[RMDB]
Background: The record gives the reactivity of an RNA of 177 nucleotides to 2A3 and DMS. The RNA was probed in 150 mM KOAc, 10 mM MgCl2 and 150 mM bicine (pH 8.5) at 24 C. In probing experiments dimethyl sulfate is read out at A N1 and C N3, which are open when not base-paired. For DMS, 2,680 sequencing reads were counted.
RNA sequence: GGGAACGACUCGAGUAGAGUCGAAAAGGCUAAGCUGGGUAGUUUGCGUGAUAACUUUGCGCAACAGGUGCAAGAGAUGGAGCUCUUUACGGCUGAUUUAAAGAGCAAUCAGGAGCUUGCCGAGGAGUGUCAACUGUGAAUUCGUUCACAGUUGACAAAAAGAAACAACAACAACAAC
Reactivity to 2A3 in 0.01 (KOAc 150mM, MgCl2 10mM, bicine 150mM(pH8.5), 24C), signal-to-noise 1, nucleotides 027 to 126: g020g000c060u060a000a000g000c020u060g000g070g050u050a070g050u020u020u060g000c000g010u000g000a010u040a140a030c060u050u040u020g000c010g000c000a010a020c010a050g010g120u090g020c010a000a020g030a000g000a080u050g010g040a070g000c000u010c000u000u030u010a070c070g150g000c110u060g040a110u060u050u100a000a010a000g020a010g030c040a010a090u020c010a000g060g010a050g000c000u030u040g000c010c000g010a070g050g010a110g100
Reactivity to DMS in 0.01 (KOAc 150mM, MgCl2 10mM, bicine 150mM(pH8.5), 24C), signal-to-noise 3, nucleotides 027 to 126: g010g020c040u000a070a060g010c010u000g000g000g010u000a070g010u000u000u000g010c010g060u000g000a030u000a210a160c300u000u010u000g010c020g010c000a040a050c100a120g010g010u000g000c020a040a050g010a090g000a140u000g000g030a200g000c010u000c000u000u000u010a050c150g000g000c100u010g010a120u010u000u010a010a010a020g000a010g010c010a090a050u000c050a050g010g020a120g010c010u000u000g010c020c000g000a130g010g010a130g000